[RMDB]
RNA sequence: GGGAACGACUCGAGUAGAGUCGAAAAUGCGGGCGCGUCAUUGCGAUGCAUCGCCGCAUACAGCGCCGCGGCAAUGGCACCUGAUGCGGUCACCGCAACCACCACAGCAAGCCAUGGUGAUCGCUUGCAUCCGAGAGCUAUUCGUAGCUCUCGGAUGAAAAGAAACAACAACAACAAC
Reactivity to 2A3 in 0.01 (KOAc 150mM, MgCl2 10mM, bicine 150mM(pH8.5), 24C), signal-to-noise 3, nucleotides 027 to 126: u070g010c010g000g030g010c040g020c010g030u010c030a020u050u270g040c080g180a150u050g020c020a040u060c070g040c010c010g000c010a020u090a080c060a080g100c060g000c080c040g160c000g100g000c000a040a110u060g100g000c010a040c060c030u010g010a030u050g000c030g040g060u100c080a050c110c010g030c010a020a010c010c020a020c000c010a080c010a030g030c010a080a020g010c020c020a060u110g080g000u110g110a080u040c040g010c040u020u040g010
Reactivity to DMS in 0.01 (KOAc 150mM, MgCl2 10mM, bicine 150mM(pH8.5), 24C), signal-to-noise 3, nucleotides 027 to 126: u000g010c020g000g000g000c070g000c020g050u010c050a090u010u000g020c130g030a090u010g010c020a070u000c080g000c030c000g010c000a070u000a080c140a130g000c110g040c090c120g020c020g010g000c030a030a040u010g010g020c010a070c100c040u020g000a020u010g010c000g000g010u010c060a120c010c010g000c030a090a170c030c030a300c050c040a110c170a160g010c050a060a030g010c020c130a060u000g000g000u000g020a060u000c130g010c000u000u000g020

This 177-nucleotide RNA was probed chemically with 2A3 and DMS. The data come from the RNA Mapping Database (RMDB), library OK2TST. The reactions ran in a buffer of 150 mM KOAc, 10 mM MgCl2 and 150 mM bicine (pH 8.5), at 24 C.